Structure probing data (2A3 and DMS) for a 177-nucleotide construct. The 2A3 profile rests on 11,516 reads. The DMS profile rests on 17,021 reads. 2A3 is a SHAPE reagent: it acylates the 2'-hydroxyl of flexible nucleotides of all four kinds. The RNA was probed in 150 mM KOAc, 10 mM MgCl2 and 150 mM bicine (pH 8.5) at 24 C.
[RMDB]
RNA sequence: GGGAACGACUCGAGUAGAGUCGAAAAGCCUGAGGACAGCAGGGCUGACAUGCCCCAGACACCUCCAGGGCCUGGAGCUGGUACCAGCGCUGGCCUCCUGGCACUGCUCACUGGUGGGGCUGGCGCCCAAGUUAAGAGACUUCGGUCUCUUAACUUGAAAAGAAACAACAACAACAAC
Reactivity to 2A3 in 0.01 (KOAc 150mM, MgCl2 10mM, bicine 150mM(pH8.5), 24C), signal-to-noise 4, nucleotides 027 to 126: g030c000c010u020g020a040g030g040a130c030a040g040c030a030g040g030g000c020u040g060a050c020a100u240g020c010c000c010c000a010g040a040c020a070c030c010u000c040c050a040g020g030g020c000c010u030g040g020a030g020c030u030g040g030u090a100c040c030a050g010c020g010c030u010g000g000c010c000u010c000c010u000g010g000c040a050c170u110g020c030u050c050a050c050u090g040g060u160g040g010g000g010c010u010g010g010c020g000c000c020
Reactivity to DMS in 0.01 (KOAc 150mM, MgCl2 10mM, bicine 150mM(pH8.5), 24C), signal-to-noise 8, nucleotides 027 to 126: g010c010c000u000g000a060g000g010a100c040a060g010c070a120g010g010g010c020u010g010a120c190a080u010g010c020c010c000c020a110g000a160c070a060c030c020u010c080c120a060g000g000g010c030c020u000g000g000a060g020c020u000g000g010u010a080c100c040a100g010c050g020c010u000g000g000c040c030u000c010c040u000g000g010c040a080c040u000g000c060u000c060a190c050u010g000g010u010g020g000g000g000c020u000g000g000c060g000c010c090